[RMDB]
RNA sequence: GGGAACGACUCGAGUAGAGUCGAAAAGAUUCGCCGGAGCUCCUUCUCGGCUAUUCGCUUUUUCUUCCUUUCCUCUACCCACUGCUCGAGGGCCUCCUCCCUCGCCUUCGAGCCGGGUCUUGCAUCGCCGCUCGCUGCUUCGGCAGCGAGAAAAGAAACAACAACAACAAC
Reactivity to 2A3 in 0.01 (KOAc 150mM, MgCl2 10mM, bicine 150mM(pH8.5), 24C), signal-to-noise 4, nucleotides 027 to 129: g020a090u070u070c050g000c010c020g020g010a030g010c060u060c050c030u120u050c070u010c040g020g010c030u040a080u030u100c050g050c050u030u060u000u050u020c010u000u060c000c020u010u010u040c020c000u070c030u050a050c010c000c010a050c060u100g010c000u000c000g000a000g010g010g010c000c020u080c010c020u060c010c010c000u050c010g010c000c000u010u000c010g010a000g040c000c000g000g000g000u000c010u030u130g000c000a130u040c030g000c020c020g020
Reactivity to DMS in 0.01 (KOAc 150mM, MgCl2 10mM, bicine 150mM(pH8.5), 24C), signal-to-noise 4, nucleotides 027 to 129: g000a050u000u000c100g000c030c010g020g010a070g020c080u040c110c040u000u000c070u020c120g010g030c000u030a030u050u030c150g010c070u020u030u030u020u020c040u000u000c000c000u020u010u030c040c020u040c050u050a110c000c050c010a150c160u030g020c020u000c080g020a010g040g020g000c030c090u030c040c040u020c010c000c020u000c130g010c010c010u050u010c010g040a050g040c070c110g000g020g030u000c080u010u040g040c140a100u000c160g030c030c050g030

Chemical mapping of a 170-nucleotide RNA with 2A3 and DMS. The reactions ran in a buffer of 150 mM KOAc, 10 mM MgCl2 and 150 mM bicine (pH 8.5), at 24 C. 2A3 adducts were read by reverse transcription with SuperScript II with manganese.